[RMDB]
RNA sequence: GGGAACGACUCGAGUAGAGUCGAAAACAUUCCGGUUUUGCCUUUUCCUUAAUUCUUUGUCCGCUCUUGUGCUGCGGGAGUGGAAGCGUCUGAAAGGUGAGGCUGGGAGAGGGCCUGAAAAGUUUGUGUUAACUGAGAAGGAAGGUUCCAGGCGAACCGGACUAACGAUUUUCGAAUCGUUAGUCCGAAAAGAAACAACAACAACAAC
Reactivity to DMS in 0.01 (KOAc 150mM, MgCl2 10mM, bicine 150mM(pH8.5), 24C), signal-to-noise 1, nucleotides 027 to 156: c040a180u000u010c010c000g020g040u000u000u000u000g030c000c030u000u050u000u000c070c060u010u030a000a180u000u000c030u000u000u000g010u010c000c000g040c050u000c010u000u010g060u010g030c100u000g060c060g000g020g000a090g060u030g020g020a040a030g020c130g040u000c080u000g000a040a050a020g020g020u000g000a030g010g020c030u020g030g000g010a070g000a120g020g000g070c050c000u010g000a100a080a080a110g040u000u000u020g060u020g040u010u000a020a070c060u010g040a110g010a150a070g010g020a100a060g000g020u000u000c060c010a130g030g000c040g010a090a090c110
Reactivity to 2A3 in 0.01 (KOAc 150mM, MgCl2 10mM, bicine 150mM(pH8.5), 24C), signal-to-noise 3, nucleotides 027 to 156: c020a050u030u050c000c020g010g010u030u010u020u060g020c000c010u050u050u080u090c030c010u120u120a140a100u170u100c050u150u140u210g090u030c010c000g010c020u000c010u060u020g040u110g130c130u130g020c030g000g010g000a000g000u020g000g020a020a010g040c040g060u030c060u080g070a080a030a010g020g000u010g010a010g020g000c020u030g000g000g020a040g010a000g000g030g010c010c020u060g050a060a080a030a070g050u100u160u110g070u040g040u070u130a050a050c030u040g010a020g030a150a050g080g020a010a000g050g010u060u030c040c010a020g020g000c000g000a010a010c030